[RMDB]
RNA sequence: GGGAACGACUCGAGUAGAGUCGAAAACGCCGUCUCCUUCGGGAGACGGCGGCUCGGCACGUAGCGCAGCUGGUAGCGCACCGUCAUGCCGUGUCGGGGGUCGGAGGUUCAAAUCCUCUCGUGCCGACAGCGUCGCCAGGUGUUUCGACACCUGGCGUCACAAAACAAGAUUCGUCUUGUUUUGUGAAAAAGAAACAACAACAACAAC
Reactivity to 2A3 in 0.01 (KOAc 150mM, MgCl2 10mM, bicine 150mM(pH8.5), 24C), signal-to-noise 2, nucleotides 027 to 156: c000g000c020c000g010u010c030u020c010c010u050u130c290g080g000g010a000g000a000c000g000g000c010g000g000c010u000c000g010g000c000a030c000g020u060a010g010c000g000c010a030g010c110u230g060g200u220a010g010c000g020c010a020c010c010g070u040c010a070u170g250c150c160g090u040g000u020c010g000g000g010g040g010u130c020g000g000a000g000g000u010u050c020a000a020a040u020c000c000u000c010u030c020g010u010g000c000c000g020a040c040a050g040c060g110u120c010g010c000c020a000g000g000u010g030u030u110u100c180g030a010c000a000c000c000u000g000g010c010g000
Reactivity to DMS in 0.01 (KOAc 150mM, MgCl2 10mM, bicine 150mM(pH8.5), 24C), signal-to-noise 2, nucleotides 027 to 156: c010g000c000c010g000u000c020u010c000c040u010u000c270g080g040g000a020g030a010c000g020g020c030g010g000c020u000c000g000g020c030a000c020g020u000a050g010c020g000c010a170g050c050u000g120g000u000a160g020c000g010c020a050c070c020g050u000c050a130u000g030c080c080g000u000g000u000c000g000g000g000g040g010u010c070g010g010a010g040g000u000u000c140a120a300a160u010c000c000u020c010u010c010g030u000g130c000c000g010a030c050a110g000c050g000u010c000g040c010c000a010g030g010u000g010u000u000u010c240g020a170c020a000c000c000u000g000g010c030g010

Structure probing data (2A3 and DMS) for a 207-nucleotide construct. For 2A3 the reverse transcriptase was SuperScript II with manganese. For DMS the reverse transcriptase was MarathonRT.